[RMDB]
RNA sequence: GGGAACGACUCGAGUAGAGUCGAAAACAAUCGUCACAGACAUCUACACGGUAGAAGACCAUAGGCUGGAAGACACCACUCCCAUGCAAUACGCUCCCAACGCCAUUAGGACGGAAGGGAAGGAGACAUGGUUCAAAAGUUUCGACUUUUGAACCAUAAAAGAAACAACAACAACAAC
Reactivity to DMS in 0.01 (KOAc 150mM, MgCl2 10mM, bicine 150mM(pH8.5), 24C), signal-to-noise 4, nucleotides 027 to 126: c110a100a110u010c100g000u010c040a070c090a110g000a100c150a100u010c040u000a090c060a090c070g030g020u000a050g000a080a050g030a080c080c040a060u010a080g020g020c030u000g000g010a080a110g020a110c070a050c040c030a080c050u000c010c000c010a080u050g010c110a100a080u050a030c040g020c040u000c010c000c010a050a300c100g000c000c020a180u030u040a040g020g000a090c060g030g000a160a120g000g000g020a100a110g000g030a060g010a110c200
Reactivity to 2A3 in 0.01 (KOAc 150mM, MgCl2 10mM, bicine 150mM(pH8.5), 24C), signal-to-noise 7, nucleotides 027 to 126: c040a020a120u160c060g040u040c040a030c030a070g080a040c020a140u010c010u060a020c100a010c110g040g010u060a040g060a180a030g050a040c000c020a070u060a070g050g000c030u040g030g030a060a040g030a020c020a030c030c020a040c020u020c000c010c000a010u070g010c010a050a090u080a230c090g020c030u020c000c010c000a020a050c010g000c020c000a120u150u210a100g030g080a080c050g020g040a070a080g080g000g030a040a020g070g010a030g000a020c080
Structure probing data (DMS and 2A3) for a 177-nucleotide construct. Values cover nucleotides 27 to 126. For DMS the reverse transcriptase was MarathonRT. For DMS, 6,152 sequencing reads were counted. The reactions ran in a buffer of 150 mM KOAc, 10 mM MgCl2 and 150 mM bicine (pH 8.5), at 24 C.